[RMDB]
RNA sequence: GGGAACGACUCGAGUAGAGUCGAAAAUACCAAUGGUUCGCCAUUGGUACUUGUAUUGACGAAUACUACCGUAGAUGUAUUCAGGUCUCAUAACUACGGAUAUACACUAGAGUUUCGACUCUAGUAACGAAUUAAACGUAUUCGUACGUUUAAUUCGAAAAGAAACAACAACAACAAC
Reactivity to DMS in 0.01 (KOAc 150mM, MgCl2 10mM, bicine 150mM(pH8.5), 24C), signal-to-noise 8, nucleotides 027 to 126: u000a000c010c000a000a000u000g000g010u000u010c240g020c000c000a010u000u000g000g000u000a000c040u000u000g010u000a140u010u010g010a140c150g000a010a010u000a010c000u000a130c000c000g000u000a000g010a110u000g000u000a010u000u000c020a100g010g000u000c010u000c020a060u010a080a150c010u000a010c010g000g000a300u010a100u000a080c210a040c000u000a000g000a010g010u000u000u010c200g010a020c000u000c000u000a000g010u000a030a110
Reactivity to 2A3 in 0.01 (KOAc 150mM, MgCl2 10mM, bicine 150mM(pH8.5), 24C), signal-to-noise 9, nucleotides 027 to 126: u020a010c000c000a000a000u020g000g040u050u050c240g040c080c000a000u000u000g000g000u000a020c010u040u130g140u120a170u080u210g100a050c070g020a020a010u010a020c010u070a270c000c010g010u010a010g010a090u100g020u030a020u010u040c030a050g070g110u000c020u000c040a090u070a160a080c010u010a010c000g010g020a030u060a020u030a120c070a000c020u010a000g000a000g010u010u110u120c220g110a020c000u000c000u000a000g000u000a010a020